This 177-nucleotide RNA was probed chemically with DMS.
RNA sequence: GGGAACGACUCGAGUAGAGUCGAAAAUGAAACGAAGGGGGGACGGAGAACGCUAUGUUGGCCGGGCGACGGUUGUCCCGGUUUAAGCGUGUAGGCUGGUUUUCCAGGCAAAUCCGGAGAAAAAAAACACUAAAUCAGUCUUCGGACUGAUUUAGUGAAAAGAAACAACAACAACAAC
Reactivity to DMS in 0.01 (KOAc 150mM, MgCl2 10mM, bicine 150mM(pH8.5), 24C), signal-to-noise 2, nucleotides 027 to 126: u010g010a060a110a080c140g010a140a060g000g010g010g020g010g000a090c030g030g000a060g000a170a040c030g020c010u010a050u000g010u000u000g010g030c000c030g010g000g010c300g020a160c150g020g010u000u020g010u020c000c000c000g010g020u000u000u000a050a040g030c000g010u000g010u000a160g020g000c000u000g000g000u010u000u050u000c010c030a150g010g000c040a050a070a130u000c020c000g000g000a120g040a050a000a000a030a040a010a070a120